[RMDB]
RNA sequence: GGGAACGACUCGAGUAGAGUCGAAAAACAUUCCGAGGGGACCGUCCCUCGGUAAUGGCGAAUGGGACCCAGAAAUCUCCUUUGAUUCCCAGAGAGAAUCAGGAGAAAACUGGCUCUCCCUUAGCCAGCACCUAACAGUUCGCUGUUAGGAAAAGAAACAACAACAACAAC
Reactivity to 2A3 in 0.01 (KOAc 150mM, MgCl2 10mM, bicine 150mM(pH8.5), 24C), signal-to-noise 9, nucleotides 027 to 129: a000c040a110u110u040c000c000g010a000g010g020g020g050a140c030c040g260u250c010c000c000u000c000g000g000u010a010a030u030g000g000c000g020a030a020u060g000g000g000a010c030c010c010a000g010a040a300a020u010c000u010c010c000u120u110u250g000a000u010u010c010c030c130a060g050a000g000a000g000a160a000u010c000a000g000g000a000g000a010a010a000a000c000u000g000g000c000u000c000u000c000c000c000u000u000a000g000c000c000a000g030c030a040
Reactivity to DMS in 0.01 (KOAc 150mM, MgCl2 10mM, bicine 150mM(pH8.5), 24C), signal-to-noise 9, nucleotides 027 to 129: a070c060a150u060u030c010c020g010a040g030g010g020g030a210c160c200g080u100c020c010c010u020c000g000g000u030a010a040u020g000g000c000g030a120a070u020g000g040g000a000c150c010c010a030g000a030a150a090u020c020u020c030c020u030u060u090g000a030u040u010c000c010c090a160g000a130g010a160g010a020a000u000c020a010g000g010a000g030a020a010a040a100c020u000g000g020c000u010c060u000c000c000c020u030u010a210g000c000c000a040g000c170a140
This 170-nucleotide RNA was probed chemically with 2A3 and DMS. 2A3 is a SHAPE reagent: it acylates the 2'-hydroxyl of flexible nucleotides of all four kinds. The DMS profile rests on 68,290 reads. 2A3 adducts were read by reverse transcription with SuperScript II with manganese. It was measured as part of the RMDB library 15KLIB.